Description:
The record gives the reactivity of an RNA of 177 nucleotides to 2A3 and DMS.
RNA sequence: GGGAACGACUCGAGUAGAGUCGAAAAGUCAAGUGGCAGCAUAGGUAGACGUGCAAUCAGGGACUAAGUCUGCAGAUGUGACUUGCAUGAGGUGGGCAUGACUGUGCUACGAGCAUAACUAAGAACGGGUUAGGACGAGUUUCGACUCGUCCUAACCAAAAGAAACAACAACAACAAC
Reactivity to 2A3 in 0.01 (KOAc 150mM, MgCl2 10mM, bicine 150mM(pH8.5), 24C), signal-to-noise 1, nucleotides 027 to 126: g040u010c050a040a030g010u030g020g070c060a020g010c000a060u010a060g050g000u010a010g000a080c020g000u080g000c030a020a160u130c040a080g070g000g030a000c040u050a070a060g030u020c030u060g000c030a010g030a120u110g010u060g050a090c050u040u040g030c000a060u120g040a020g120g000u080g010g120g000c030a030u050g000a080c040u050g000u020g070c010u040a080c000g000a010g000c020a090u070a200a050c030u100a150a000g000a160a040c110g140
Reactivity to DMS in 0.01 (KOAc 150mM, MgCl2 10mM, bicine 150mM(pH8.5), 24C), signal-to-noise 2, nucleotides 027 to 126: g000u020c030a070a130g000u000g020g020c010a130g030c040a100u000a080g020g020u000a020g000a130c060g020u010g010c090a110a100u010c120a060g000g000g000a110c070u000a090a110g000u000c040u000g030c030a020g020a050u000g020u000g000a060c080u000u000g010c070a080u010g010a070g000g000u000g000g050g020c020a060u000g030a070c050u010g000u000g000c040u000a020c100g020a070g000c050a050u000a080a120c130u000a040a040g020a080a070c160g040
Source: RMDB library OK2TRN, as collected in RNAgym. The reactions ran in a buffer of 150 mM KOAc, 10 mM MgCl2 and 150 mM bicine (pH 8.5), at 24 C. The 2A3 profile rests on 1,127 reads. 2A3 adducts were read by reverse transcription with SuperScript II with manganese.